RNA sequence: GGGAACGACUCGAGUAGAGUCGAAAAGCUGGGGUGUUCCGCGGCGUGGACAACGUGGUUGCGUGCCUCGGCGACACCGCGGCCGCCGCCGACGGCACCAUGACGGUGACGCUUGAAGACGUGUUAAAACCUACAAUGCUUUCGAGCAUUGUAGGUUAAAAGAAACAACAACAACAAC
Reactivity to 2A3 in 0.01 (KOAc 150mM, MgCl2 10mM, bicine 150mM(pH8.5), 24C), signal-to-noise 3, nucleotides 027 to 126: g010c000u030g030g050g050g020u000g000u040u020c000c000g010c000g000g010c010g030u010g060g080a040c010a070a010c090g200u260g020g000u080u090g010c040g020u080g010c000c000u000c000g000g010c000g000a000c020a010c020c070g020c020g020g000c000c000g010c030c020g000c010c000g000a040c030g010g030c010a030c030c020a080u200g120a050c110g070g020u040g010a010c000g000c020u000u000g030a040a030g030a020c110g000u020g050u070u100a160a200
Reactivity to DMS in 0.01 (KOAc 150mM, MgCl2 10mM, bicine 150mM(pH8.5), 24C), signal-to-noise 3, nucleotides 027 to 126: g000c030u000g010g000g010g020u010g000u010u000c000c040g000c090g000g010c030g020u000g000g010a140c030a040a050c020g020u020g040g010u030u010g010c060g040u010g010c030c000u000c020g020g000c230g030a030c050a020c000c020g000c100g030g000c030c020g020c020c030g010c030c030g000a080c060g000g000c020a030c000c020a090u040g020a160c170g010g040u000g000a110c010g000c080u000u000g020a140a060g000a060c100g000u010g000u000u020a080a080